[RMDB]
RNA sequence: GGGAACGACUCGAGUAGAGUCGAAAAACAGGACCACAAGAUUGCCAAACAAUCCUUGCGACCCUUCUGCACCGUUUGCAACCGCUACUUCAAAACCCCUCGCAAGUUUGUGGAGCACGUGAAGUCCCGGUACAUCAACAUUCGUGUUGAUGUACCGAAAAGAAACAACAACAACAAC
Reactivity to 2A3 in 0.01 (KOAc 150mM, MgCl2 10mM, bicine 150mM(pH8.5), 24C), signal-to-noise 9, nucleotides 027 to 126: a000c040a040g020g030a030c000c010a020c020a040a040g030a130u070u110g030c030c040a060a070a040c010a040a050u040c030c030u020u040g010c020g050a090c010c010c000u060u060c030u060g000c020a030c020c040g050u030u100u110g030c020a040a030c000c020g010c030u070a040c010u070u090c020a040a080a080a140c000c000c000c020u020c010g010c020a020a030g020u030u060u050g040u070g040g050a060g020c020a020c070g040u050g070a070a020g030u020c010c000
Reactivity to DMS in 0.01 (KOAc 150mM, MgCl2 10mM, bicine 150mM(pH8.5), 24C), signal-to-noise 5, nucleotides 027 to 126: a090c100a070g000g010a060c010c020a060c040a070a050g020a060u010u020g000c060c130a070a110a150c070a060a030u020c100c040u010u000g010c080g010a090c060c010c020u010u010c010u000g020c050a060c030c040g000u010u000u010g030c030a070a060c010c010g020c030u000a040c070u000u000c110a060a040a070a070c050c000c010c010u010c080g000c030a040a020g000u000u000u000g010u010g000g010a200g010c050a040c090g000u010g010a080a070g000u010c020c020